[RMDB]
RNA sequence: GGGAACGACUCGAGUAGAGUCGAAAAGAGAGCGUCCUUCAGUCCACUCAUGGGCGGUGCUAGGGUCGAAUUAGCUGCCGACUCAUUCACCCACAUGCCAAGCAAGAAACGCUUGAGAUAGCGAAGCACAACAUUGCAACUUCGGUUGCAAUGUUGUAAAAGAAACAACAACAACAAC
Reactivity to 2A3 in 0.01 (KOAc 150mM, MgCl2 10mM, bicine 150mM(pH8.5), 24C), signal-to-noise 7, nucleotides 027 to 126: g140a000g000a000g010c010g020u040c000c000u020u050c030a070g020u020c030c020a060c030u100c050a120u110g030g010g020c050g020g020u030g020c040u090a080g040g010g010u080c090g030a050a090u040u020a070g050c070u100g040c040c020g070a070c020u000c020a030u040u040c010a030c020c010c000a020c000a030u090g030c020c010a040a010g000c020a060a040g060a140a120a020c030g010c000u020u020g010a040g010a080u060a010g040c060g020a040a010g040c060
Reactivity to DMS in 0.01 (KOAc 150mM, MgCl2 10mM, bicine 150mM(pH8.5), 24C), signal-to-noise 4, nucleotides 027 to 126: g000a070g000a060g000c030g020u010c010c040u000u010c070a070g020u000c030c030a080c180u020c120a040u020g000g010g010c130g040g010u000g000c080u010a150g000g000g010u000c070g010a070a100u000u000a080g010c010u000g010c080c030g000a100c030u010c040a130u010u000c040a080c000c010c030a100c090a030u020g010c050c040a080a070g010c050a080a110g000a060a140a100c050g000c010u010u000g010a090g000a100u010a040g000c040g020a100a130g020c160
Conditions: 150 mM KOAc, 10 mM MgCl2 and 150 mM bicine (pH 8.5), 24 C.
Structure probing data (2A3 and DMS) for a 177-nucleotide construct.